An RNA of 177 nucleotides, treated with DMS and 2A3 and read out base by base.
2A3 adducts were read by reverse transcription with SuperScript II with manganese.
RNA sequence: GGGAACGACUCGAGUAGAGUCGAAAAGACCUCAGGCACCGAGUAUGUGUAUCGGAGCGAGCUUGGCUAGACAGAGCCAGAGAAGUGGGUCGAAGUGGGGCGUAAAGCAAGGACGGUCCAAGGGCGAGCUCUAGUAUACGUUCGCGUAUACUAGAGCAAAAGAAACAACAACAACAAC
Reactivity to DMS in 0.01 (KOAc 150mM, MgCl2 10mM, bicine 150mM(pH8.5), 24C), signal-to-noise 2, nucleotides 027 to 126: g020a090c010c000u000c050a140g040g010c050a090c030c010g000a050g020u000a080u010g020u010g010u000a080u000c030g010g000a120g040c030g010a090g010c060u000u000g000g020c010u000a100g010a110c300a090g000a060g020c000c000a050g000a090g000a100a120g040u000g010g020g010u000c060g010a090a050g010u010g010g000g020g000c070g030u000a060a060a080g020c100a050a080g000g010a040c100g030g000u000c030c030a100a080g000g000g030c060g000a170
Reactivity to 2A3 in 0.01 (KOAc 150mM, MgCl2 10mM, bicine 150mM(pH8.5), 24C), signal-to-noise 1, nucleotides 027 to 126: g050a000c000c010u040c030a010g160g000c020a020c030c010g000a010g070u110a140u280g300u030g060u030a060u040c000g020g010a000g000c000g000a020g010c030u100u090g000g010c000u050a050g040a060c070a050g120a040g100c000c000a040g000a010g000a130a010g040u120g020g040g000u010c000g000a030a010g030u060g030g030g000g020c020g010u120a120a060a010g030c080a060a050g080g020a020c010g010g060u080c050c000a060a030g030g000g000c030g030a060
Reactivities are given for positions 27 through 126.
Values are in units of 0.01, from 0 to 300, in steps of 10.
The reactions ran in a buffer of 150 mM KOAc, 10 mM MgCl2 and 150 mM bicine (pH 8.5), at 24 C.